[RMDB]
This 177-nucleotide RNA was probed chemically with 2A3 and DMS. For DMS, 2,048 sequencing reads were counted. For 2A3 the reverse transcriptase was SuperScript II with manganese.
RNA sequence: GGGAACGACUCGAGUAGAGUCGAAAAUGCCAGGGGUUCGCCCCUGGCACAUUACCGAGAAACCAGCUCGGUAUAAAACUGCAACCCUUGGAAACAAGGGAAACUUUGACACAUUCGUGUGUCAAAACAACUUAGUUCGAUUCGUCGAACUAAGUUGAAAAGAAACAACAACAACAAC
Reactivity to 2A3 in 0.01 (KOAc 150mM, MgCl2 10mM, bicine 150mM(pH8.5), 24C), signal-to-noise 1, nucleotides 027 to 126: u030g010c000c000a010g000g000g000g000u030u080c130g120c020c000c000c010u000g000g000c000a000c000a000u010u000a000c000c000g010a000g020a040a170a010c060c010a030g040c000u000c000g000g010u000a020u010a000a000a000a020c030u100g060c040a080a120c000c000c000u000u010g020g010a050a070a040c020a000a000g000g000g080a040a000a020c030u050u010u000g000a010c000a000c000a010u050u160c190g050u070g000u000g000u020c030a000a000a000a010
Reactivity to DMS in 0.01 (KOAc 150mM, MgCl2 10mM, bicine 150mM(pH8.5), 24C), signal-to-noise 3, nucleotides 027 to 126: u000g000c000c000a000g000g030g040g010u000u020c240g000c020c000c010c000u010g010g000c000a000c080a030u000u000a020c000c000g010a010g010a090a120a280c090c090a140g020c000u010c010g000g000u000a010u000a030a060a100a140c200u010g030c150a110a110c010c000c000u010u000g010g000a160a120a160c010a020a000g000g010g010a020a030a130c110u000u000u000g000a010c000a010c000a040u000u020c200g020u020g000u000g000u010c000a000a000a030a130